[RMDB]
RNA sequence: GGGAACGACUCGAGUAGAGUCGAAAAACUAAAGCUGAAUAUCUGGAUUUGGAGACUGUUUGAUGAGUAAUGUCCGUCUAAUUGCACGACUAGAUAUUAAAGGACCUAACCUAAUCAAAGGAGUGCACUAAUUUACGCGGUUCGCCGCGUAAAUUAGAAAAGAAACAACAACAACAAC
Reactivity to DMS in 0.01 (KOAc 150mM, MgCl2 10mM, bicine 150mM(pH8.5), 24C), signal-to-noise 1, nucleotides 027 to 126: a150c030u010a060a090a100g040c070u000g010a080a080u010a030u000c000u010g010g010a130u010u000u000g030g000a120g000a030c050u000g030u000u000u010g000a030u000g030a090g000u030a140a080u030g000u000c020c000g020u000c030u010a090a060u000u010g000c040a060c010g010a170c100u010a060g020a040u010a070u000u020a040a120a080g000g010a110c160c100u030a050a090c030c010u020a090a040u000c090a010a090a060g000g000a180g010u000g020c070a140
Reactivity to 2A3 in 0.01 (KOAc 150mM, MgCl2 10mM, bicine 150mM(pH8.5), 24C), signal-to-noise 1, nucleotides 027 to 126: a020c090u160a140a040a000g020c020u010g130a070a000u040a000u200c040u030g070g040a170u000u110u220g060g000a100g000a000c020u040g060u130u120u090g070a110u040g010a010g030u060a130a160u120g060u060c030c000g000u020c000u020a160a070u070u120g020c050a020c030g060a010c030u010a000g020a060u010a000u140u300a150a160a010g040g000a010c000c010u000a060a070c000c000u050a160a010u160c080a040a040a040g020g000a000g110u060g010c040a060

Conditions: 150 mM KOAc, 10 mM MgCl2 and 150 mM bicine (pH 8.5), 24 C. Chemical mapping of a 177-nucleotide RNA with DMS and 2A3. For 2A3, 531 sequencing reads were counted. DMS adducts were read by reverse transcription with MarathonRT.